Description
The record gives the reactivity of an RNA of 177 nucleotides to 2A3 and DMS. For 2A3, 2,114 sequencing reads were counted. Conditions: 150 mM KOAc, 10 mM MgCl2 and 150 mM bicine (pH 8.5), 24 C. It was measured as part of the RMDB library OK1LIB. For 2A3 the reverse transcriptase was SuperScript II with manganese.
RNA sequence: GGGAACGACUCGAGUAGAGUCGAAAAGAAUACACGCACUAAUGAUGAAAACGUACGGCACGUUAGCGAGUGCAAGUCUUUGAAUACACUCAACCUUGCGUUUUGCAAAGAUAUAACAGACGUCACACCAAUCGGUACGGUUCGCCGUACCGAUUGGAAAAGAAACAACAACAACAAC
Reactivity to 2A3 in 0.01 (KOAc 150mM, MgCl2 10mM, bicine 150mM(pH8.5), 24C), signal-to-noise 3, nucleotides 027 to 126: g060a030a000u110a060c020a010c020g040c000a020c100u060a040a140u100g160a050u070g060a070a120a000a000c040g000u090a030c010g050g070c070a000c100g050u040u070a020g050c020g050a030g020u030g010c010a110a000g010u000c050u020u080u070g060a070a030u150a100c040a020c050u050c000a040a080c010c000u020u040g020c000g030u000u010u020u080g030c020a020a040a140g110a060u130a000u030a160a070c050a030g090a020c030g020u000c020a010c010a000
Reactivity to DMS in 0.01 (KOAc 150mM, MgCl2 10mM, bicine 150mM(pH8.5), 24C), signal-to-noise 2, nucleotides 027 to 126: g010a010a030u030a020c130a090c070g020c030a060c050u000a090a000u020g000a120u000g000a040a010a060a150c190g060u000a040c130g010g000c000a000c000g000u000u000a030g010c080g000a010g010u000g000c260a010a120g040u000c010u000u000u000g000a170a060u060a150c110a130c040u000c030a060a120c200c010u030u000g000c000g000u000u000u000u010g010c010a000a140a080g170a010u010a060u010a090a070c100a100g000a050c060g000u000c100a130c170a240